[RMDB]
RNA sequence: GGGAACGACUCGAGUAGAGUCGAAAAAAUACUAAAAGGUGAGUGUUCAGGAAAACCGCAAGCCAUGUUUGUUGAUUAUUCCGGACGGGAGCGUUACACGGAUAUAAAUGCAUCUUUUGGCAAGUUGCUGAUUUGGUAAAUUCGUUUACCAAAUCAGAAAAGAAACAACAACAACAAC
Reactivity to 2A3 in 0.01 (KOAc 150mM, MgCl2 10mM, bicine 150mM(pH8.5), 24C), signal-to-noise 2, nucleotides 027 to 126: a030a000u150a030c020u050a020a000a040a100g080g020u050g050a060g030u110g060u040u050c070a030g030g040a000a050a020a030c000c040g050c040a030a020g010c020c020a060u100g070u010u090u000g060u000u030g060a080u020u130a050u100u000c010c000g040g010a010c030g010g050g060a080g070c010g020u040u050a030c070a020c030g000g020a010u030a000u000a130a140a030u080g000c000a020u030c020u000u170u020u020g050g000c010a060a020g040u080u050g010
Reactivity to DMS in 0.01 (KOAc 150mM, MgCl2 10mM, bicine 150mM(pH8.5), 24C), signal-to-noise 4, nucleotides 027 to 126: a070a030u010a080c030u010a030a030a040a030g000g010u000g000a090g010u000g020u000u000c060a070g020g010a060a040a080a070c060c060g020c050a050a090g010c040c070a070u000g010u000u010u010g020u000u010g010a050u010u010a120u000u000c010c010g010g020a050c060g010g000g010a070g010c040g020u010u010a070c100a150c060g000g000a050u000a070u010a040a060a060u010g000c030a020u000c020u010u000u000u010g000g010c070a060a060g010u000u000g000